[RMDB]
This 177-nucleotide RNA was probed chemically with 2A3 and DMS. Conditions: 150 mM KOAc, 10 mM MgCl2 and 150 mM bicine (pH 8.5), 24 C. 2A3 adducts were read by reverse transcription with SuperScript II with manganese. Source: RMDB library RFM100, as collected in RNAgym.
RNA sequence: GGGAACGACUCGAGUAGAGUCGAAAAAAGCCCCAACCAGACGAUUGCCCCAGGAAUGAGUGAAGAUGGAGGGGUUCAGCAAGGCCCCCCUGCCACCCCAGACUCACACAUGUAGAUUCUGGCCCCAUCACGCAUAUAGCUUCGGCUAUAUGCGUGAAAAAGAAACAACAACAACAAC
Reactivity to 2A3 in 0.01 (KOAc 150mM, MgCl2 10mM, bicine 150mM(pH8.5), 24C), signal-to-noise 2, nucleotides 027 to 126: a020a000g060c010c010c000c000a000a000c020c000a030g130a100c000g040a050u080u100g060c020c000c020c000a030g050g090a190a010u010g010a050g110u060g000a030a120g090a160u140g010g090a090g000g020g000g000u070u090c050a110g020c050a000a100g010g010c010c000c000c000c000c000u010g050c030c000a010c040c000c000c000a000g010a010c040u030c010a000c000a000c000a130u160g060u120a050g000a060u040u000c010u000g000g000c000c100c000c000a010
Reactivity to DMS in 0.01 (KOAc 150mM, MgCl2 10mM, bicine 150mM(pH8.5), 24C), signal-to-noise 2, nucleotides 027 to 126: a060a190g020c090c000c000c040a030a080c050c060a100g010a070c060g000a060u020u000g030c040c010c000c020a030g030g010a060a050u000g000a050g030u000g010a040a060g020a090u000g010g010a100g030g000g030g010u010u030c050a110g010c180a200a140g020g000c090c060c010c030c040c050u030g000c020c000a030c010c030c070c040a010g000a180c050u000c060a000c050a050c070a080u000g030u050a080g000a150u000u010c000u000g000g030c000c000c000c020a160